RNA sequence: GGGAACGACUCGAGUAGAGUCGAAAAACUUUGGCCGACGCUGCUAGGCGGCUGCGCACUGCUGUCUGGCCCGGCGCCGCGCUAGGGCGCACGUUUCGCUCUGCGGAGGGUAACCGGGCUGAAAUAACUCCUAAAGCAAGUUCGCUUGCUUUAGGAGAAAAGAAACAACAACAACAAC
Reactivity to 2A3 in 0.01 (KOAc 150mM, MgCl2 10mM, bicine 150mM(pH8.5), 24C), signal-to-noise 2, nucleotides 027 to 126: a000c040u110u060u060g030g000c010c010g030a030c030g020c050u060g010c030u080a090g050g110c020g000g000c010u000g000c080g000c020a080c120u090g010c020u040g020u080c030u080g030g000c010c000c000g010g000c020g010c020c000g050c010g040c060u110a000g000g000g000c000g110c030a110c070g110u090u200u210c000g000c020u000c000u010g020c000g040g060a160g130g060g090u030a050a070c010c000g000g000g000c000u000g030a010a020a000u040a020a040
Reactivity to DMS in 0.01 (KOAc 150mM, MgCl2 10mM, bicine 150mM(pH8.5), 24C), signal-to-noise 3, nucleotides 027 to 126: a110c090u000u000u010g030g010c020c050g010a090c090g000c020u010g010c050u020a080g030g010c080g000g020c030u010g020c080g000c090a080c080u010g000c040u010g000u010c050u010g000g020c000c080c020g010g020c240g010c000c000g000c040g010c060u020a030g000g010g000c010g020c120a050c180g000u010u010u010c020g000c000u000c000u000g020c030g000g000a150g030g000g020u000a070a080c040c010g000g020g010c010u000g000a030a080a080u010a110a180
The record gives the reactivity of an RNA of 177 nucleotides to 2A3 and DMS. DMS (dimethyl sulfate) methylates the pairing face of unpaired adenines and cytosines. The RNA was probed in 150 mM KOAc, 10 mM MgCl2 and 150 mM bicine (pH 8.5) at 24 C. DMS adducts were read by reverse transcription with MarathonRT. For 2A3 the reverse transcriptase was SuperScript II with manganese. Values cover nucleotides 27 to 126. Source: RMDB library M2PK90, as collected in RNAgym. For 2A3, 1,862 sequencing reads were counted.